[RMDB]
RNA sequence: GGGAACGACUCGAGUAGAGUCGAAAAUUAUUUUUAACUUUUAUCAGGGCUAGCUUUUGGGUAAUUGAUAAAAGUUUGCGAUAAAUUACUUCACUAACGUAUCGCUUCGCUGAGUGCGCUCCGAAGCGUAAAGGAGACGCUUCGGCGUCUCCUUUACAAAAGAAACAACAACAACAAC
Reactivity to 2A3 in 0.01 (KOAc 150mM, MgCl2 10mM, bicine 150mM(pH8.5), 24C), signal-to-noise 1, nucleotides 027 to 126: u000u000a020u000u040u000u040u070a000a000c000u000u000u000u000a000u010c000a010g020g180g000c060u070a000g030c050u200u150u230u300g080g010g000u100a150a150u100u050g000a000u000a000a000a000a000g000u000u040u060g020c000g020a030u040a010a090a030u180u040a150c050u020u020c070a040c120u060a250a050c120g140u100a060u160c010g000c000u020u010c030g000c030u000g010a000g020u040g060c020g040c050u000c000c000g050a020a000g000c000
Reactivity to DMS in 0.01 (KOAc 150mM, MgCl2 10mM, bicine 150mM(pH8.5), 24C), signal-to-noise 2, nucleotides 027 to 126: u060u000a000u000u010u040u040u040a000a020c010u020u000u000u000a010u000c010a020g020g020g000c130u010a090g000c110u000u010u090u050g040g000g010u000a050a100u060u000g000a000u000a010a020a000a020g000u000u000u020g000c080g010a030u000a010a050a070u020u010a130c210u030u050c070a040c090u000a050a080c160g000u000a060u030c010g010c020u020u000c000g000c140u060g010a090g010u000g020c080g000c010u000c020c000g000a010a000g020c030